[RMDB]
RNA sequence: GGGAACGACUCGAGUAGAGUCGAAAACUUCAACCACUUUAAGCGCAGCAUGUAUCGCGCCGGCCGCUUUCACUGGGAGCGCUUUCCGGACGCCCGGCCGCGGUACGAGGGCGAGUGGGAGAUGCUACAACCAAACCGACUUCGGUCGGUUUGGUUGAAAAGAAACAACAACAACAAC
Reactivity to 2A3 in 0.01 (KOAc 150mM, MgCl2 10mM, bicine 150mM(pH8.5), 24C), signal-to-noise 2, nucleotides 027 to 126: c010u020u000c020a030a040c000c000a000c030u070u100u220a230a010g100c110g010c130a040g000c030a080u190g000u000a000u000c000g000c000g000c000c000g030g000c080c030g070c050u040u170u110c090a170c220u300g100g000g000a000g080c100g050c230u070u020u000c040c020g060g000a070c070g000c000c000c000g040g000c040c000g010c020g000g010u030a000c000g010a070g020g010g000c040g030a010g000u020g010g090g000a000g000a000u060g140c000u090a060
Reactivity to DMS in 0.01 (KOAc 150mM, MgCl2 10mM, bicine 150mM(pH8.5), 24C), signal-to-noise 1, nucleotides 027 to 126: c000u010u040c190a060a300c090c000a200c000u000u030u000a070a300g000c010g000c010a290g130c000a210u000g000u000a000u000c000g000c000g010c000c000g000g000c160c060g010c300u190u000u110c240a240c100u000g000g000g000a030g040c260g000c010u000u000u000c000c110g000g000a300c110g000c190c000c010g000g000c280c000g190c000g000g010u000a000c000g000a300g000g000g000c000g000a000g010u000g000g040g000a300g010a000u000g000c010u000a140
Chemical mapping of a 177-nucleotide RNA with 2A3 and DMS. The DMS profile rests on 605 reads. Conditions: 150 mM KOAc, 10 mM MgCl2 and 150 mM bicine (pH 8.5), 24 C. DMS adducts were read by reverse transcription with MarathonRT. For 2A3, 682 sequencing reads were counted. The data come from the RNA Mapping Database (RMDB), library OK1LIB.